[RMDB]
RNA sequence: GGGAACGACUCGAGUAGAGUCGAAAAGGCAGCCUGUCGAGCCGCAGGGCUCCAGGACUGCACCAUGCUCGUGUGUGGCGACGACUUAGUCGUUAUCUGUGAAAGUGCGGGGGUCCAGGAGGACGCGCAAAAGAACUUCCUUCGGGAAGUUCUUUUGAAAAGAAACAACAACAACAAC
Reactivity to 2A3 in 0.01 (KOAc 150mM, MgCl2 10mM, bicine 150mM(pH8.5), 24C), signal-to-noise 5, nucleotides 027 to 126: g180g010c020a000g000c030c000u060g050u240c150g010a000g010c000c020g060c120a060g120g100g000c000u000c000c000a000g000g020a100c000u000g000c000a010c000c000a040u050g020c020u060c130g180u170g000u030g010u030g140g010c020g020a010c000g020a020c030u110u120a030g010u020c000g010u010u050a090u050c040u030g090u030g120a180a060a050g060u060g030c010g000g000g000g000g050u000c030c000a040g010g110a070g030g020a040c040g020c020g000
Reactivity to DMS in 0.01 (KOAc 150mM, MgCl2 10mM, bicine 150mM(pH8.5), 24C), signal-to-noise 6, nucleotides 027 to 126: g010g010c010a010g010c010c000u000g000u060c170g010a020g080c000c010g010c300a130g010g000g010c000u000c000c000a010g000g000a120c000u000g000c010a100c030c020a060u010g000c020u010c150g010u050g030u020g010u000g010g020c020g010a030c020g010a090c080u030u020a080g010u000c010g010u000u000a030u030c030u010g010u020g010a070a080a070g000u000g010c030g000g000g000g010g010u000c030c030a110g010g010a100g010g010a050c030g020c060g010